[RMDB]
RNA sequence: GGGAACGACUCGAGUAGAGUCGAAAAACAUCAGGCCCUGAUACAUAGGACCAGUGAUUAUAGUACAGAUUAGGAGGUCGUCUACGCCUAGCAUUGAGUGUGACAAGAUUGCCCACUUUUUUUGCUAACUACCGGUCCAUUUCGAUGGACCGGUAGUAAAAGAAACAACAACAACAAC
Reactivity to 2A3 in 0.01 (KOAc 150mM, MgCl2 10mM, bicine 150mM(pH8.5), 24C), signal-to-noise 1, nucleotides 027 to 126: a000c010a000u030c030a030g020g030c010c000c010u000g000a070u080a240c070a040u170a070g000g020a010c020c010a070g050u010g080a050u000u150a100u100a090g060u090a020c100a110g140a170u030u040a020g090g000a000g030g000u000c020g000u020c060u040a030c030g010c010c000u020a030g090c060a060u000u130g040a020g060u030g000u100g030a030c000a030a050g110a280u050u140g040c020c030c020a110c020u090u000u010u000u000u120u140g000c010u010a060
Reactivity to DMS in 0.01 (KOAc 150mM, MgCl2 10mM, bicine 150mM(pH8.5), 24C), signal-to-noise 1, nucleotides 027 to 126: a130c110a040u000c080a100g030g010c030c020c010u010g010a120u000a140c240a080u010a040g000g040a000c020c020a070g030u020g000a100u000u010a050u000a080g010u000a100c120a060g000a100u000u010a150g000g010a060g010g010u010c020g030u000c050u000a080c110g000c050c010u010a070g030c070a040u000u000g000a030g010u020g000u010g020a050c040a050a130g030a090u000u010g010c020c000c010a110c040u000u000u000u000u000u000u000g010c070u010a080
Notes:
An RNA of 177 nucleotides, treated with 2A3 and DMS and read out base by base. Values are in units of 0.01, from 0 to 300, in steps of 10. The RNA was probed in 150 mM KOAc, 10 mM MgCl2 and 150 mM bicine (pH 8.5) at 24 C. Values cover nucleotides 27 to 126. For 2A3, 935 sequencing reads were counted. It was measured as part of the RMDB library OK2TRN.